[RMDB]
RNA sequence: GGGAACGACUCGAGUAGAGUCGAAAACGAUUCAAACUCCUCAAUGGGCACUCCACAAGAAGCAGGUACAGGUGUUUGCCGGUCCGACUCAGACGACCGCAGCUCCGCAGGGUUUGUUCUGGCGAGAUUAGGCGAACGCUCACUAUCAGAACCCUCGCGCACUAUGGCUAUUCGUAGCCAUAGUGCGAAAAGAAACAACAACAACAAC
Reactivity to 2A3 in 0.01 (KOAc 150mM, MgCl2 10mM, bicine 150mM(pH8.5), 24C), signal-to-noise 1, nucleotides 027 to 156: c060g010a050u140u200c080a070a040a040c050u020c010c000u010c080a150a150u130g000g020g040c040a020c100u050c020c000a040c020a060a060g090a030a030g070c060a040g140g000u050a060c020a080g000g030u010g070u020u040u010g040c040c020g000g060u010c000c020g090a090c100u060c300a000g000a000c000g000a000c000c000g090c020a060g060c040u130c130c010g000c020a040g020g000g010u030u050u140g070u120u050c010u020g020g000c010g000a180g030a160u060u100a190g010g000c000g010a000a000c020g000c010u020c040a050c010u100a060u130c030a010g050a050a040c000c000c060u050c000g060
This 207-nucleotide RNA was probed chemically with 2A3. The RNA was probed in 150 mM KOAc, 10 mM MgCl2 and 150 mM bicine (pH 8.5) at 24 C.